[RMDB]
RNA sequence: GGGAACGACUCGAGUAGAGUCGAAAAGGCGGCACGGGCGUCGCGAAGGACGCGAACACGGUGCCCGCGGGCGGCUUCACGUUUUCGACGAUGGUGAUUCCGGCCGGCAACGUCGGCCCGAGCCACAACUAGCUAUGGAUUUCGAUCCAUAGCUAGUAAAAGAAACAACAACAACAAC
Reactivity to DMS in 0.01 (KOAc 150mM, MgCl2 10mM, bicine 150mM(pH8.5), 24C), signal-to-noise 7, nucleotides 027 to 126: g000g040c050g010g010c020a110c020g010g010g020c040g010u000c010g000c030g010a200a140g020g010a120c060g020c020g010a070a300c110a070c060g000g020u000g010c040c020c150g030c060g010g010g010c030g000g010c050u000u000c060a040c050g010u000u000u010u010c140g010a090c120g010a070u000g010g000u000g000a060u000u000c020c120g000g000c010c020g010g010c040a080a070c110g000u000c050g010g000c010c000c050g000a050g000c030c020a040c080a100
Reactivity to 2A3 in 0.01 (KOAc 150mM, MgCl2 10mM, bicine 150mM(pH8.5), 24C), signal-to-noise 3, nucleotides 027 to 126: g080g010c050g000g010c030a010c050g030g010g000c030g040u040c010g000c030g040a110a070g240g060a050c040g010c010g040a090a010c040a000c070g040g040u030g000c000c000c030g070c040g000g030g040c000g020g000c000u050u030c020a010c040g020u010u020u110u160c130g070a080c070g040a110u110g200g040u030g020a070u040u050c010c000g030g030c000c010g010g000c060a130a050c080g030u040c050g050g000c000c000c010g020a020g010c000c000a030c000a050